[RMDB]
RNA sequence: GGGAACGACUCGAGUAGAGUCGAAAACUCCUCUUCACCCAAUAGGAGGCGAAUUUGUGCGCGCUUAGCGUAGAGCUCGGUAAGUUCGGGGUAGAGGUGGAUGAUACGGGUGAUCUCGGUGUGCGCCACCAUCUAAGCGCUUCGGCGCUUAGAUGGUAAAAGAAACAACAACAACAAC
Reactivity to DMS in 0.01 (KOAc 150mM, MgCl2 10mM, bicine 150mM(pH8.5), 24C), signal-to-noise 1, nucleotides 027 to 126: c100u000c010c010u000c020u010u010c060a130c040c030c030a060a090u010a120g000g000a080g040g020c060g010a030a080u000u000u000g020u010g010c050g030c030g000c120u010u000a080g020c050g020u000a120g030a170g020c020u000c010g010g010u000a040a060g020u000u000c100g030g000g010g020u010a040g010a100g020g000u010g000g000a070u010g010a190u010a070c130g000g000g020u010g000a090u000c020u000c040g000g010u000g010u000g040c020g010c000c060
Reactivity to 2A3 in 0.01 (KOAc 150mM, MgCl2 10mM, bicine 150mM(pH8.5), 24C), signal-to-noise 1, nucleotides 027 to 126: c000u020c020c010u020c040u100u160c080a110c030c010c010a050a180u210a220g030g050a050g020g020c030g070a060a040u010u060u120g150u110g080c040g050c010g000c030u060u040a090g060c030g100u050a050g020a000g110c060u040c060g000g070u100a070a040g000u040u030c050g000g000g060g100u030a070g020a000g040g020u060g010g020a080u110g000a010u030a150c030g000g000g030u050g060a040u030c050u090c050g040g010u060g030u030g020c100g030c000c000
Source information: Conditions: 150 mM KOAc, 10 mM MgCl2 and 150 mM bicine (pH 8.5), 24 C. The record gives the reactivity of an RNA of 177 nucleotides to DMS and 2A3. For 2A3, 773 sequencing reads were counted. The data come from the RNA Mapping Database (RMDB), library OK2TST. Values cover nucleotides 27 to 126.